[RMDB]
RNA sequence: GGGAACGACUCGAGUAGAGUCGAAAAGGACCCCUCAGCUCUGGAGACUUCCGACCUGUGAGGUCGAGGAUUCCCCGUGGAGGGAGACAGCCACCGGGAUAGGACAGAGAAAUCACCUCCAGAGGACCGCCCAGCUAGUUCGCUAGCUGGAAAAGAAACAACAACAACAAC
Reactivity to 2A3 in 0.01 (KOAc 150mM, MgCl2 10mM, bicine 150mM(pH8.5), 24C), signal-to-noise 9, nucleotides 027 to 129: g040g030a070c010c000c000c020u060c060a060g020c000u000c000u010g010g000a020g020a030c040u070u010c040c020g010a030c000c010u120g130u220g240a140g040g000u020c020g030a090g020g020a040u030u040c000c000c000c020g040u080g020g020a070g020g080g010a030g040a020c030a020g020c000c000a010c010c030g010g000g010a030u080a100g070g040a040c090a080g130a030g050a110a070a040u120c050a060c020c000u000c000c000a010g000a010g010g000a110c190c060g030c010
Reactivity to DMS in 0.01 (KOAc 150mM, MgCl2 10mM, bicine 150mM(pH8.5), 24C), signal-to-noise 9, nucleotides 027 to 129: g020g020a160c020c000c010c040u040c080a140g040c030u000c010u010g000g000a040g020a160c090u040u000c060c030g000a050c030c000u000g050u060g060a100g010g000u020c020g040a130g000g000a120u000u000c020c000c050c120g040u060g000g000a080g000g030g010a130g000a040c080a050g070c000c000a050c010c280g010g020g010a050u020a200g010g000a070c260a080g000a080g000a100a070a050u010c060a090c080c020u000c000c020a030g030a020g030g030a070c070c130g000c120
An RNA of 170 nucleotides, treated with 2A3 and DMS and read out base by base. It was measured as part of the RMDB library 15KLIB. The reactions ran in a buffer of 150 mM KOAc, 10 mM MgCl2 and 150 mM bicine (pH 8.5), at 24 C. For DMS the reverse transcriptase was MarathonRT.